[RMDB]
The record gives the reactivity of an RNA of 207 nucleotides to 2A3 and DMS. Reactivities are given for positions 27 through 156. The DMS profile rests on 5,536 reads. For 2A3, 2,450 sequencing reads were counted. The RNA was probed in 150 mM KOAc, 10 mM MgCl2 and 150 mM bicine (pH 8.5) at 24 C. It was measured as part of the RMDB library RNAMAK.

RNA sequence: GGGAACGACUCGAGUAGAGUCGAAAAACGUCCCUGCUUCGGCAGGGACGUAAAAAGCGUACUACUUGUGGGGGAGAAACGCGUCCCAAAUAGGACGCCUUUCGAGGAUCCGUAACAUCAAGUAUCGCAAAAACUUGAAACGUUCGCGUUUCAAGAACAAUUUAAUUCGAUUCGUCGAAUUAAAUUGAAAAGAAACAACAACAACAAC
Reactivity to 2A3 in 0.01 (KOAc 150mM, MgCl2 10mM, bicine 150mM(pH8.5), 24C), signal-to-noise 2, nucleotides 027 to 156: a000c010g010u000c000c000c000u000g000c000u030u030c180g130g000c000a000g020g010g030a000c010g000u020a010a000a000a000a000g010c010g010u070a060c030u010a000c000u050u010g000u050g010g010g000g000g000a010g010a010a000a000c020g000c000g000u000c030c000c000a120a140a100u210a030g000g000a000c010g000c000c030u020u010u020c040g050a190g030g000a000u000c010c020g050u120a090a050c030a120u160c000a000a030g020u020a020u300c030g000c020a060a020a020a040a070c000u010u000g000a000a000a000c000g040u070u070c270g030c000g110u010u020u000c010a000a000g000a030a010
Reactivity to DMS in 0.01 (KOAc 150mM, MgCl2 10mM, bicine 150mM(pH8.5), 24C), signal-to-noise 2, nucleotides 027 to 156: a070c010g000u000c000c000c000u000g010c000u000u000c290g070g030c010a030g040g010g030a010c010g000u010a000a030a070a100a060g020c010g020u010a070c100u010a090c000u000u000g020u010g000g000g010g000g020a200g020a000a010a010c070g040c010g010u000c000c000c010a010a110a180u010a050g010g020a020c000g020c020c030u010u000u020c040g010a300g060g010a080u020c010c000g030u000a090a090c030a080u010c020a080a040g010u010a020u010c040g040c030a050a030a050a100a100c000u000u000g000a000a010a010c000g010u010u010c290g020c060g050u010u000u000c000a000a000g000a070a160